Notes:
The record gives the reactivity of an RNA of 177 nucleotides to DMS and 2A3. It was measured as part of the RMDB library OK2TRN. The 2A3 profile rests on 1,901 reads. Conditions: 150 mM KOAc, 10 mM MgCl2 and 150 mM bicine (pH 8.5), 24 C.
[RMDB]
RNA sequence: GGGAACGACUCGAGUAGAGUCGAAAAGCGCGGGCGCGUCGGCGACGAUGCGCGGCAUUUCGGCGUCGAGCGCGUCGUACGGGAACGCGGCGUCGAAGCCGAACGCAUCGCGCGCGGCUUCGGGCCAGAGCACCGGAUUAUUCGUAAUCCGGUGCUCAAAAGAAACAACAACAACAAC
Reactivity to DMS in 0.01 (KOAc 150mM, MgCl2 10mM, bicine 150mM(pH8.5), 24C), signal-to-noise 1, nucleotides 027 to 126: g020c030g020c030g030g010g030c030g020c080g010u010c040g030g010c010g000a140c000g000a010u000g000c000g010c040g030g000c060a090u000u000u010c000g010g040c020g010u000c000g010a060g030c050g020c040g020u010c040g050u060a110c110g000g010g000a080a160c050g030c040g000g030c000g030u010c010g000a030a190g010c010c000g010a080a030c040g000c000a110u000c070g000c000g010c180g000c060g000g000c020u000u010c060g000g000g010c010c020a070
Reactivity to 2A3 in 0.01 (KOAc 150mM, MgCl2 10mM, bicine 150mM(pH8.5), 24C), signal-to-noise 1, nucleotides 027 to 126: g040c090g000c030g040g050g020c050g000c090g050u040c010g030g000c000g030a030c010g000a020u030g000c180g030c000g010g010c010a050u070u090u080c000g020g010c010g000u020c020g050a100g130c070g020c050g000u030c010g030u060a130c050g000g010g070a130a020c030g030c020g180g000c000g100u030c010g000a000a010g000c000c000g030a060a000c010g020c000a050u080c070g000c000g000c010g000c020g050g000c070u050u050c050g060g050g050c030c020a020